RNA sequence: GGGAACGACUCGAGUAGAGUCGAAAAAUACCUGGACGCCAACGGCCUGCUGCCUCCUGCCGGCCACCCUGGCGCGAUGGACGCGCUGCAGGUGUUCGGUCCGCACGUGACUCGCUGGAUCAAUGGGCAUGUAAAGAGGUUUCGACCUCUUUACAUGAAAAGAAACAACAACAACAAC
Reactivity to 2A3 in 0.01 (KOAc 150mM, MgCl2 10mM, bicine 150mM(pH8.5), 24C), signal-to-noise 7, nucleotides 027 to 126: a000u130a070c010c010u040g050g040a030c050g030c050c010a050a020c030g050g000c010c010u020g020c010u040g020c000c010u030c010c010u030g060c030c000g010g000c000c010a030c020c010c010u060g010g000c020g010c010g050a060u190g150g120a070c030g020c000g000c030u090g030c020a020g000g020u030g040u060u060c030g000g020u010c020c010g040c010a050c070g050u070g050a040c000u010c080g000c030u040g010g030a070u080c030a050a130u140g020g030g000
Reactivity to DMS in 0.01 (KOAc 150mM, MgCl2 10mM, bicine 150mM(pH8.5), 24C), signal-to-noise 9, nucleotides 027 to 126: a080u010a100c020c010u010g010g010a100c120g010c040c040a050a100c100g010g010c020c020u000g000c040u000g010c020c030u010c040c030u000g010c070c050g010g000c040c020a060c080c050c060u010g000g010c010g010c020g000a240u010g010g000a160c070g020c050g020c020u000g010c150a040g010g010u000g010u000u000c060g010g000u000c040c060g000c080a070c120g010u010g010a070c040u000c040g010c020u000g010g000a090u000c060a090a100u000g000g000g010